[RMDB]
RNA sequence: GGGAACGACUCGAGUAGAGUCGAAAAGACGUCACCUUGCAGUGUUAACUUGGCUCUCAUGAACCUCUUUGAUCUUCCACAAGGGGUAGGCUACGGGUGAAACCUCUUAGGCUAAUACUUCUAUGAAUAUUCUAUAUGGGUUCGCCCAUAUAGAAUAAAAAGAAACAACAACAACAAC
Reactivity to 2A3 in 0.01 (KOAc 150mM, MgCl2 10mM, bicine 150mM(pH8.5), 24C), signal-to-noise 9, nucleotides 027 to 126: g050a020c020g030u030c020a030c030c010u030u110g040c050a050g010u020g040u190u090a070a070c020u050u060g030g010c000u010c000u020c060a080u110g040a070a050c010c010u040c030u060u030u070g050a070u070c050u140u020c060c020a060c030a060a030g010g010g000g000u020a020g050g000c010u040a020c050g020g000g050u100g050a080a030a030c010c010u010c010u050u080a050g050g000c010u030a050a030u040a160c030u040u050c030u060a130u120g060a120a060
Reactivity to DMS in 0.01 (KOAc 150mM, MgCl2 10mM, bicine 150mM(pH8.5), 24C), signal-to-noise 7, nucleotides 027 to 126: g000a090c110g000u010c040a050c030c030u000u010g010c070a060g010u000g010u010u000a060a080c070u000u010g020g010c040u000c020u010c050a080u010g000a110a070c020c010u000c010u000u000u010g010a120u010c080u000u010c060c060a080c110a050a050g010g000g000g010u000a030g010g000c040u010a080c170g000g000g030u000g000a080a060a100c050c010u010c030u010u010a060g010g010c020u010a070a090u020a070c060u010u010c040u000a120u030g010a090a150